[RMDB]
RNA sequence: GGGAACGACUCGAGUAGAGUCGAAAACAUCCAGGAUGGCACCCUUCUCACAAUCUACUACUGGGAUGACCCCGAGCAUGGCCCCUCCUGGUGCCUAGCAAGUACCCACGGAUAUGAUGUGAGUAACCAAUGGAACGAGAUUCGUCUCGUUCCAUUGAAAAGAAACAACAACAACAAC
Reactivity to DMS in 0.01 (KOAc 150mM, MgCl2 10mM, bicine 150mM(pH8.5), 24C), signal-to-noise 6, nucleotides 027 to 126: c090a060u000c020c050a080g000g000a050u000g010g020c070a110c030c020c060u000u000c010u000c020a040c080a050a090u000c030u000a080c070u020a090c130u010g010g000g000a100u010g010a180c050c030c030c050g000a130g010c050a160u000g010g000c050c030c020c080u000c070c080u000g010g010u000g020c020c010u010a230g010c060a080a090g000u010a070c020c010c030a030c100g000g000a120u010a060u010g010a080u000g000u000g000a040g000u000a050a110c190
Reactivity to 2A3 in 0.01 (KOAc 150mM, MgCl2 10mM, bicine 150mM(pH8.5), 24C), signal-to-noise 3, nucleotides 027 to 126: c010a030u030c020c010a020g140g030a060u060g060g000c030a090c020c010c000u090u000c020u010c000a050c020a080a250u020c030u070a060c000u030a030c040u080g000g000g090a110u080g200a120c050c030c000c020g050a020g010c030a040u060g020g010c010c030c000c020u130c020c030u040g000g020u010g020c000c000u000a040g000c020a060a030g000u040a060c020c000c010a020c060g040g010a050u040a060u300g040a010u040g040u000g020a020g010u050a030a020c030